Chemical mapping of a 177-nucleotide RNA with 2A3. Values cover nucleotides 27 to 126.
RNA sequence: GGGAACGACUCGAGUAGAGUCGAAAAGAGUCGUCGAAGGAGCGCGUCCCGCUCGGACGAAAAACAGUGCUUACCACUGGUAAGAAAAAGGUACGAUAGGUACCCUAUCAAAUAAGACGACGAGAAAGGGUAACUUUGACUUCGGUCAAAGUUACCCAAAAGAAACAACAACAACAAC
Reactivity to 2A3 in 0.01 (KOAc 150mM, MgCl2 10mM, bicine 150mM(pH8.5), 24C), signal-to-noise 1, nucleotides 027 to 126: g240a140g000u000c000g000u000c010g000a170a000g090g000a000g110c000g040c060g210u100c000c010c000g020c040u000c000g000g000a040c010g070a120a000a000a000a000c040a040g000u070g130c150u070u220a150c000c000a040c160u220g000g040u090a030a040g070a000a040a000a000a000g040g000u000a000c180g060a300u220a010g000g150u000a000c100c010c000u000a150u010c150a070a070a070u130a000a030g000a090c000g000a000c000g090a000g050a000a010a070
Source: RMDB library OK1LIB, as collected in RNAgym. The 2A3 profile rests on 383 reads. 2A3 adducts were read by reverse transcription with SuperScript II with manganese. The reactions ran in a buffer of 150 mM KOAc, 10 mM MgCl2 and 150 mM bicine (pH 8.5), at 24 C.